[RMDB]
RNA sequence: GGGAACGACUCGAGUAGAGUCGAAAAGACACUUUCGAGUGUCCUAGAACCUUUGUGCACAGCACACCUAGGGAGAGCUCGCCGCACCCAUUGGGUGCGGAAACGCUCGAAGAACUAGGUAGCUGUGCACUCUGGUCCGGAGGAGGUUCGCCUCCAAGGUCUAAAUUGUGUUCGCACAAUUUAGACCAAAAGAAACAACAACAACAAC
Reactivity to 2A3 in 0.01 (KOAc 150mM, MgCl2 10mM, bicine 150mM(pH8.5), 24C), signal-to-noise 1, nucleotides 027 to 156: g020a000c030a000c030u060u080u130c110g040a020g020u020g000u000c000c020u100a200g070a080a030c000c020u020u030u010g000u020g040c000a000c000a000g010c020a030c020a010c110c010u000a000g000g020g030a030g000a000g010c020u060c210g030c040c000g050c000a000c000c010c010a070u240u300g020g020g000u000g010c000g000g020a070a020a010c110g010c000u020c030g000a060a000g000a020a000c000u000a000g000g000u000a000g000c010u010g020u000g010c000a000c000u020c000u000g020g000u010c000c100g080g030a040g010g000a010g050g070u100u090c180g070c050c000u030c010c020a010a080